[RMDB]
RNA sequence: GGGAACGACUCGAGUAGAGUCGAAAAGAUAUGGAGUCGUAACAGCGAUAAGCUACUCGGAAACGAGAAUAGCUUUUGACGCUGGAGAAGACUCCUAAGUCAAAAGUCUUCGGUUCGCCGAAGACAACCAUGGGUAAUAGUUCGCUAUUACCCAUGGAAAAGAAACAACAACAACAAC
Reactivity to DMS in 0.01 (KOAc 150mM, MgCl2 10mM, bicine 150mM(pH8.5), 24C), signal-to-noise 6, nucleotides 027 to 126: g000a030u010a300u000g010g010a000g020u010c000g010u010a130a270c020a000g000c000g030a170u000a010a010g020c000u010a030c000u010c000g010g000a140a110a180c010g000a020g010a100a120u000a010g000c000u000u000u000u000g010a170c070g010c000u000g000g000a080g000a100a180g000a010c000u000c000c000u000a010a070g010u000c030a070a080a120a160g000u000c000u000u000c000g000g010u000u010c210g020c010c000g000a000a010g010a000c000a040a080
Reactivity to 2A3 in 0.01 (KOAc 150mM, MgCl2 10mM, bicine 150mM(pH8.5), 24C), signal-to-noise 6, nucleotides 027 to 126: g040a000u060a050u170g000g000a000g010u010c010g010u020a060a020c010a010g000c010g040a060u000a090a000g000c000u010a010c000u000c000g020g020a070a080a040c020g010a010g030a160a300u050a030g000c000u060u040u050u130g190a110c040g000c010u000g010g000a010g010a010a020g010a000c010u000c000c000u000a030a000g020u010c020a040a010a050a170g000u000c000u000u000c010g030g040u040u080c300g030c080c000g000a000a000g000a000c000a000a000